[RMDB]
RNA sequence: GGGAACGACUCGAGUAGAGUCGAAAAAAGUAUAAGAAGUAUUGGGAACAAUAAAGAAAACAUAGAAAUUCCAAAACCUGGUACUUUAGAAGAAUCAUCAUCUUCAAUUUUUAUGCUAUCUUUUCCCCCCUAUACGCUACUUCGGUAGCGUAUAGGGAAAAGAAACAACAACAACAAC
Reactivity to 2A3 in 0.01 (KOAc 150mM, MgCl2 10mM, bicine 150mM(pH8.5), 24C), signal-to-noise 2, nucleotides 027 to 126: a000a000g020u020a000u010a000a070g020a010a000g010u000a000u030u050g010g000g020a180a020c080a100a120u090a100a090a000g050a040a130a020a030c040a010u270a190g110a060a180a100u070u000c030c040a010a010a100a240c010c000u000g020g000u010a020c000u150u130u170a060g010a000a000g020a030a030u100c100a020u050c020a010u000c160u000u010c010a130a180u010u070u000u140u050a000u000g010c050u030a080u160c080u010u200u030u020c000c000c000